[RMDB]
RNA sequence: GGGAACGACUCGAGUAGAGUCGAAAAUGCUAAGGGUUUGAUAUCUGCUAAAACCCGGUGCAUUCAUCAAUGCAGGUUAAGCCAAAGGGAUGUCCCGACCGGAGGCCGACAAUCCAGGGAACCGGAUUGUUCUAUGGCACUUCGGUGCCAUAGAACAAAAAGAAACAACAACAACAAC
Reactivity to 2A3 in 0.01 (KOAc 150mM, MgCl2 10mM, bicine 150mM(pH8.5), 24C), signal-to-noise 3, nucleotides 027 to 126: u130g000c010u040a000a030g010g000g000u040u000u000g010a010u010a010u030c010u010g010c000u020a020a020a000a000c000c000c000g010g000u030g010c030a060u070u140c000a100u120c090a140a170u140g010c020a010g040g020u010u010a000a010g000c000c000a000a010a040g030g000g010a030u030g030u020c000c010c000g000a000c000c000g000g000a020g000g020c000c000g000a010c010a090a030u130c150c080a000g020g010g020a030a050c040c030g020g050a050u000
Reactivity to DMS in 0.01 (KOAc 150mM, MgCl2 10mM, bicine 150mM(pH8.5), 24C), signal-to-noise 4, nucleotides 027 to 126: u000g030c010u000a300a120g020g000g010u000u000u000g000a260u010a050u000c040u000g010c050u010a300a030a030a010c030c000c000g020g000u000g020c010a040u000u010c110a090u040c150a080a070u000g000c050a000g020g000u000u010a100a050g000c000c000a000a300a130g010g020g020a030u010g000u000c000c000c010g010a020c000c000g000g010a300g000g000c000c020g010a100c040a040a000u020c050c120a020g000g000g010a120a060c180c070g000g020a210u000